[RMDB]
RNA sequence: GGGAACGACUCGAGUAGAGUCGAAAAAUCUUGGCGAAGUCAGCGCGGAAGGAGCGCGCAUCUCCUUACCCUCGCCUUUUUUUUUCCGCUCCCGUUCGCGAAAGCGUUCAGCGGAAAAGGGACCAAAAUAAUUGCGGUAAUUCGUUACCGCAAUUAUAAAAGAAACAACAACAACAAC
Reactivity to 2A3 in 0.01 (KOAc 150mM, MgCl2 10mM, bicine 150mM(pH8.5), 24C), signal-to-noise 1, nucleotides 027 to 126: a000u070c050u020u080g010g020c030g000a090a020g150u130c080a040g080c020g040c060g120g010a040a030g000g040a030g000c110g000c030g000c150a130u110c000u000c000c000u010u110a260c010c030c010u010c030g010c000c000u000u040u040u060u000u000u000u040u000c030c000g000c010u060c030c060c010g000u000u020c000g000c000g070a130a060a020g010c020g010u030u000c000a000g000c010g010g030a000a030a000a000g030g010g010a010c050c090a020a180a030
Reactivity to DMS in 0.01 (KOAc 150mM, MgCl2 10mM, bicine 150mM(pH8.5), 24C), signal-to-noise 4, nucleotides 027 to 126: a070u000c070u000u000g010g020c010g020a040a070g000u010c190a080g010c130g010c270g010g000a050a020g010g000a040g000c070g020c110g000c110a090u000c010u010c010c010u000u000a130c060c010c030u000c030g000c000c000u000u010u000u000u000u000u000u000u000c000c010g020c010u000c080c060c080g010u000u000c000g010c000g010a120a070a160g000c000g020u000u000c040a050g000c010g010g000a010a010a020a030g000g000g000a150c070c100a060a070a090

This 177-nucleotide RNA was probed chemically with 2A3 and DMS.
For DMS, 3,544 sequencing reads were counted.
Conditions: 150 mM KOAc, 10 mM MgCl2 and 150 mM bicine (pH 8.5), 24 C.
High 2A3 reactivity points to a flexible backbone, as in loops and unpaired stretches.
Source: RMDB library M2PK90, as collected in RNAgym.